[RMDB]
Structure probing data (2A3 and DMS) for a 177-nucleotide construct. Values cover nucleotides 27 to 126. For DMS, 1,784 sequencing reads were counted. For 2A3 the reverse transcriptase was SuperScript II with manganese. The reactions ran in a buffer of 150 mM KOAc, 10 mM MgCl2 and 150 mM bicine (pH 8.5), at 24 C.

RNA sequence: GGGAACGACUCGAGUAGAGUCGAAAAUAGAAACUCUAAACGAACUUGAAGAGCUGCUGAUCUCAAGUGAUAUUAGUAUUUCAGUAGUAACGCAUAUAAUUGAAGAAUUUAAAAAUGUAAAAUUUGACAUUACUGGUCGCUUCGGCGGCCGGUAAUGAAAAGAAACAACAACAACAAC
Reactivity to 2A3 in 0.01 (KOAc 150mM, MgCl2 10mM, bicine 150mM(pH8.5), 24C), signal-to-noise 2, nucleotides 027 to 126: u140a060g050a040a050a020c030u010c000u050a080a090a010c070g020a040a030c000u070u020g020a180a000g000a110g050c030u090g000c070u040g050a020u010c030u000c050a050a010g050u050g130a040u030a080u300u120a050g050u050a050u010u020u040c010a020g020u050a010g040u010a070a050c000g040c070a030u190a040u050a300a070u150u060g020a070a110g050a060a060u070u130u300a160a150a050a030a030u050g010u020a060a140a120a300u120u080u070g010a010
Reactivity to DMS in 0.01 (KOAc 150mM, MgCl2 10mM, bicine 150mM(pH8.5), 24C), signal-to-noise 2, nucleotides 027 to 126: u010a150g010a100a050a080c090u000c010u000a050a040a090c110g000a240a050c030u000u000g010a090a050g000a090g010c040u000g010c140u000g010a080u000c020u000c000a010a010g000u000g000a170u010a060u000u010a040g000u000a020u000u000u000c000a080g010u010a070g020u000a070a130c180g010c020a050u000a070u000a050a090u000u000g000a090a150g000a070a050u010u000u000a030a060a060a080a030u000g000u000a070a050a070a100u000u000u010g000a260